[RMDB]
RNA sequence: GGGAACGACUCGAGUAGAGUCGAAAAUCAUAGAAUCAAGCAAGCCAGUCUGGUGAGACGAUGUCUUGAUUUACCAAAUGAACAGACUAAUGCUUAUCGAUUGUUCAACAGUGAAGCGGAUGGACUACAGUAUACUACUCUUCGGAGUAGUAUACUGAAAAGAAACAACAACAACAAC
Reactivity to 2A3 in 0.01 (KOAc 150mM, MgCl2 10mM, bicine 150mM(pH8.5), 24C), signal-to-noise 9, nucleotides 027 to 126: u050c010a020u040a170g070a040a020u040c020a040a010g050c010a050a020g090c070c060a030g090u040c060u100g140g050u200g140a040g000a020c050g070a050u110g080u070c010u010u050g020a050u020u020u060a060c020c000a030a040a120u120g030a050a030c030a050g050a020c020u070a070a060u130g030c020u070u090a040u140c050g090a080u010u120g040u090u100c060a080a070c010a070g040u040g120a060a010g020c020g050g020a050u080g040g020a020c020u080a040
Reactivity to DMS in 0.01 (KOAc 150mM, MgCl2 10mM, bicine 150mM(pH8.5), 24C), signal-to-noise 9, nucleotides 027 to 126: u010c050a080u010a100g010a080a030u000c060a040a070g010c030a070a200g010c170c130a100g010u010c060u000g010g020u000g010a140g010a030c040g010a120u010g010u010c000u000u000g000a040u000u000u000a180c120c090a050a060a110u010g010a060a070c120a040g010a070c050u000a080a150u010g000c050u000u000a110u010c080g000a090u000u000g010u000u010c090a050a070c100a070g000u010g010a050a070g010c050g010g010a110u000g000g000a070c100u010a160
Record summary
The record gives the reactivity of an RNA of 177 nucleotides to 2A3 and DMS. The data come from the RNA Mapping Database (RMDB), library OK2TST. For 2A3, 18,624 sequencing reads were counted. For DMS the reverse transcriptase was MarathonRT. The DMS profile rests on 18,922 reads. High 2A3 reactivity points to a flexible backbone, as in loops and unpaired stretches. The RNA was probed in 150 mM KOAc, 10 mM MgCl2 and 150 mM bicine (pH 8.5) at 24 C. Reactivities are given for positions 27 through 126.